[RMDB]
RNA sequence: GGGAACGACUCGAGUAGAGUCGAAAACGGCUGGCCAGGUCACGAACCCCCAGUUCGCCGACAGGCUGUACCGCUGGCAGCCGGACCUGCGGGGGCGCCCCACCGCACGCACCUGUACGUACGCCGCAUUGAUCCGUCAUUUCGAUGACGGAUCAAUAAAAGAAACAACAACAACAAC
Reactivity to 2A3 in 0.01 (KOAc 150mM, MgCl2 10mM, bicine 150mM(pH8.5), 24C), signal-to-noise 3, nucleotides 027 to 126: c010g000g000c000u040g090g050c000c000a010g040g000u060c070a030c070g040a050a040c020c010c010c020c010a010g030u070u070c020g020c060c030g050a060c050a060g040g030c030u080g070u090a080c010c050g020c040u000g010g010c010a020g000c000c000g000g010a000c000c010u010g030c050g030g010g000g020g030c000g030c000c000c000c000a050c000c020g010c000a030c030g000c010a050c000c000u030g060u100a020c020g030u010a010c040g040c030c020g060c030
Reactivity to DMS in 0.01 (KOAc 150mM, MgCl2 10mM, bicine 150mM(pH8.5), 24C), signal-to-noise 2, nucleotides 027 to 126: c050g010g030c030u010g030g020c020c050a010g020g000u040c110a080c000g000a040a080c080c010c000c020c040a170g000u000u010c080g020c110c040g000a030c070a130g000g000c020u000g040u030a100c040c040g000c020u010g020g030c000a030g000c000c030g000g000a050c040c030u000g000c030g020g000g000g010g020c040g000c070c000c000c020a130c050c030g000c090a080c030g000c040a030c010c020u000g040u020a070c090g000u000a060c040g000c030c040g030c070
Structure probing data (2A3 and DMS) for a 177-nucleotide construct. The reactions ran in a buffer of 150 mM KOAc, 10 mM MgCl2 and 150 mM bicine (pH 8.5), at 24 C. The 2A3 profile rests on 3,120 reads. The DMS profile rests on 3,345 reads.